Chemical mapping of a 177-nucleotide RNA with DMS and 2A3.

RNA sequence: GGGAACGACUCGAGUAGAGUCGAAAAUGCCGGCGUCGGUGCCGGUCUGGCUGGUAUGGCACAUACCUGGCGGCACGGUGUGGGCCGAGGAGGCCGCGUUUCGCGGGGCGCUGGCCACUAUCGGUGCCCCUACUACCAGAUUCGUCUGGUAGUAGGGAAAAGAAACAACAACAACAAC
Reactivity to DMS in 0.01 (KOAc 150mM, MgCl2 10mM, bicine 150mM(pH8.5), 24C), signal-to-noise 4, nucleotides 027 to 126: u000g000c010c000g000g000c020g010u000c160g010g020u000g010c000c010g000g010u010c080u010g010g010c030u000g010g010u010a050u010g010g000c100a090c060a090u000a040c020c000u010g010g020c040g010g010c040a060c050g000g000u000g020u000g020g000g020c000c010g010a110g000g000a170g000g010c000c010g000c020g000u000u010u000c070g020c090g010g000g000g010c030g010c020u000g020g010c020c050a050c060u010a070u000c030g010g010u000g010c080
Reactivity to 2A3 in 0.01 (KOAc 150mM, MgCl2 10mM, bicine 150mM(pH8.5), 24C), signal-to-noise 4, nucleotides 027 to 126: u100g000c010c000g010g050c040g040u120c100g120g140u170g010c020c010g000g010u000c030u030g080g020c020u010g000g060u110a080u070g140g080c090a030c010a150u040a030c000c010u020g150g000c020g020g000c030a010c070g020g000u070g010u080g070g060g000c030c020g020a080g040g070a020g040g000c020c020g000c020g000u090u160u110c080g000c040g000g040g000g000c030g010c070u110g020g000c040c000a050c020u220a210u120c040g050g040u050g060c010
The 2A3 profile rests on 7,087 reads. Conditions: 150 mM KOAc, 10 mM MgCl2 and 150 mM bicine (pH 8.5), 24 C. It was measured as part of the RMDB library OK2TRN.